[RMDB]
RNA sequence: GGGAACGACUCGAGUAGAGUCGAAAAACAAAGCGCCGACGUGGAACACGAGAUGGAAACAUCACGAAUGUCUGAAGUAGCGCAUCCCAAGAAUCAGACAAACGACUCUACUCGACUCGACAAAAAAGAAUCUUAAUUAGUUCGCUAAUUAAGAUUCAAAAGAAACAACAACAACAAC
Reactivity to 2A3 in 0.01 (KOAc 150mM, MgCl2 10mM, bicine 150mM(pH8.5), 24C), signal-to-noise 3, nucleotides 027 to 126: a030c070a010a100a040g040c030g020c030c020g170a120c060g060u140g040g100a130a020c030a010c100g070a060g000a040u010g000g020a040a030a000c010a010u020c010a000c040g090a190a080u130g000u020c010u020g050a100a030g030u110a010g020c000g000c040a050u090c010c000c010a010a030g060a030a050u120c040a030g030a080c020a040a050a000c000g010a000c000u000c000u030a010c010u000c010g000a000c000u010c010g030a020c050a000a180a000a000a000a020
Reactivity to DMS in 0.01 (KOAc 150mM, MgCl2 10mM, bicine 150mM(pH8.5), 24C), signal-to-noise 1, nucleotides 027 to 126: a120c090a040a120a090g000c020g010c020c030g000a050c070g000u010g010g010a090a080c050a130c050g010a080g000a010u000g000g000a160a050a080c020a000u000c010a070c060g000a100a050u010g000u000c020u010g000a050a040g000u000a040g010c020g000c030a040u000c050c010c030a090a090g020a140a070u030c050a010g000a000c040a020a100a200c010g020a020c020u010c000u010a020c000u000c010g040a000c020u000c000g010a050c070a000a030a090a050a040a070
The record gives the reactivity of an RNA of 177 nucleotides to 2A3 and DMS. The DMS profile rests on 856 reads. Values cover nucleotides 27 to 126. For DMS the reverse transcriptase was MarathonRT. For 2A3, 3,680 sequencing reads were counted.